[RMDB]
RNA sequence: GGGAACGACUCGAGUAGAGUCGAAAAGGCUGGCGACCUCGACGGCGGUUUGCACAUCGGCAAUGUCACCGCUAAGCACCUGAUAACAUUUGCCACCGAUACCAAAAGCCAUAUGAAUACGUACCAGGGUCCUGUCAUUAUUCGUAAUGACAGGACCAAAAGAAACAACAACAACAAC
Reactivity to 2A3 in 0.01 (KOAc 150mM, MgCl2 10mM, bicine 150mM(pH8.5), 24C), signal-to-noise 1, nucleotides 027 to 126: g030g000c060u040g000g010c030g000a040c010c000u010c050g050a030c030g000g010c020g020g030u080u130u090g050c060a030c020a090u030c020g020g050c070a030a030u020g000u040c030a010c000c020g000c010u030a070a050g030c030a060c000c000u070g030a100u090a150a030c020a120u070u100u120g040c000c000a010c000c040g030a090u140a120c000c040a030a000a100a020g030c010c000a060u050a030u100g100a110a020u100a100c060g050u010a050c000c090a040g100
Reactivity to DMS in 0.01 (KOAc 150mM, MgCl2 10mM, bicine 150mM(pH8.5), 24C), signal-to-noise 1, nucleotides 027 to 126: g010g020c070u000g000g010c000g000a300c060c030u000c060g000a120c160g050g000c010g050g000u000u020u010g050c070a000c160a030u010c120g070g000c160a050a160u000g010u000c060a030c030c030g010c000u000a190a110g030c090a150c000c030u010g030a070u040a050a030c030a090u000u010u000g010c030c010a130c100c070g010a040u000a060c050c010a030a150a060a130g000c020c030a060u000a070u000g000a080a110u010a090c060g020u010a090c030c040a110g010
Chemical mapping of a 177-nucleotide RNA with 2A3 and DMS.
2A3 adducts were read by reverse transcription with SuperScript II with manganese.
It was measured as part of the RMDB library OK2TST.
For 2A3, 1,168 sequencing reads were counted.
Conditions: 150 mM KOAc, 10 mM MgCl2 and 150 mM bicine (pH 8.5), 24 C.